[RMDB]
RNA sequence: GGGAACGACUCGAGUAGAGUCGAAAACGUGAACAUCGCUCUGCUAAGUCCCGUCGUUCUUCCAGUCAGAGCGAGAUUGUAAGCAACCUUAUGCGCAAUGAAGACAUAGAGGGACUUCUUAAUGAAGAUCAUGACCCUGAUUCGUCAGGGUCAUGAUAAAAGAAACAACAACAACAAC
Reactivity to DMS in 0.01 (KOAc 150mM, MgCl2 10mM, bicine 150mM(pH8.5), 24C), signal-to-noise 3, nucleotides 027 to 126: c180g010u010g010a110a100c200a100u020c000g060c000u000c000u020g070c090u000a060a120g010u030c030c020c010g000u020c010g010u000u000c020u000u030c050c070a060g020u000c040a000g000a050g010c030g000a030g010a020u010u010g000u030a110a110g000c060a080a200c140c040u010u030a060u010g010c060g040c010a150a060u020g010a120a040g000a040c090a060u010a050g020a020g000g020g000a110c030u020u010c030u000u020a090a020u040g020a050a090g010
Reactivity to 2A3 in 0.01 (KOAc 150mM, MgCl2 10mM, bicine 150mM(pH8.5), 24C), signal-to-noise 3, nucleotides 027 to 126: c030g130u090g100a080a020c030a090u000c000g010c000u010c000u010g050c010u080a030a050g060u050c000c020c000g000u030c000g020u090u000c000u080u030c030c000a050g080u100c010a010g020a020g000c030g000a040g000a020u030u130g040u080a120a000g000c000a020a040c050c050u210u130a090u140g010c050g000c010a000a030u130g080a030a050g050a050c040a030u130a030g080a080g000g020g000a000c000u030u040c020u030u180a140a110u150g090a030a060g040